[RMDB]
RNA sequence: GGGAACGACUCGAGUAGAGUCGAAAAAGUGGAACGCUUUGGCGGUGUAGUGCCAGAGCGAGCGCACGGCGUCGGGCAGCGGAACAACCGAGUUGCGACCGACCGCUUGACCGACCGCAUGCCGAUCUGCAUCGCCUAAUUUCGAUUAGGCGAUGCAAAAAGAAACAACAACAACAAC
Reactivity to 2A3 in 0.01 (KOAc 150mM, MgCl2 10mM, bicine 150mM(pH8.5), 24C), signal-to-noise 1, nucleotides 027 to 126: a000g060u130g000g040a220a050c010g000c000u020u000u010g020g000c030g070g070u190g100u220a220g040u180g050c000c000a040g010a000g020c000g000a010g000c110g000c000a010c050g090g000c010g030u000c000g000g000g000c000a010g020c020g000g050a090a030c050a000a000c010c050g030a110g040u040u060g060c100g010a020c000c010g030a020c000c040g000c000u070u180g060a040c020c000g020a040c000c100g030c000a010u070g000c000c000g000a090u030c030
Reactivity to DMS in 0.01 (KOAc 150mM, MgCl2 10mM, bicine 150mM(pH8.5), 24C), signal-to-noise 2, nucleotides 027 to 126: a030g050u000g000g010a130a160c030g010c000u000u000u000g000g010c000g010g030u010g030u030a120g010u000g000c010c020a020g010a030g080c000g020a040g020c180g010c020a020c080g020g000c050g020u000c000g000g000g000c020a000g000c000g010g000a120a150c230a080a120c100c090g040a110g050u010u010g030c140g020a070c070c000g000a230c010c010g010c020u020u010g020a060c000c000g020a010c080c080g010c030a120u000g000c030c010g010a070u000c040

Source information: An RNA of 177 nucleotides, treated with 2A3 and DMS and read out base by base. Reactivities are given for positions 27 through 126. For DMS the reverse transcriptase was MarathonRT. As a SHAPE reagent, 2A3 marks flexible, mostly unpaired nucleotides at the ribose 2'-OH. The 2A3 profile rests on 1,274 reads. The reactions ran in a buffer of 150 mM KOAc, 10 mM MgCl2 and 150 mM bicine (pH 8.5), at 24 C.